[RMDB]
RNA sequence: GGGAACGACUCGAGUAGAGUCGAAAAGAGAUUGCUCCCACGUCCAAGGACGGCAGCAGGCGCGAAAAUUGCCCACUCUUUGCAGGAGGCAGUUAUGAGACGUGAAGAUGAGUAUCUUGUAAAGAGGGAGCUGUCGCAAGUUCGCUUGCGACAGCUCAAAAGAAACAACAACAACAAC
Reactivity to 2A3 in 0.01 (KOAc 150mM, MgCl2 10mM, bicine 150mM(pH8.5), 24C), signal-to-noise 1, nucleotides 027 to 126: g150a000g000a000u110u180g050c000u040c000c000c000a000c000g000u000c000c020a070a090g130g010a160c000g000g000c000a000g030c000a040g040g030c010g000c000g010a070a070a000a000u020u110g000c090c000c000a090c000u020c000u080u150u170g100c130a000g000g020a060g010g100c000a040g000u120u060a210u190g000a000g070a000c040g050u100g170a190a100g060a150u110g000a020g040u060a170u070c010u000u000g060u000a040a050a050g070a100g000g020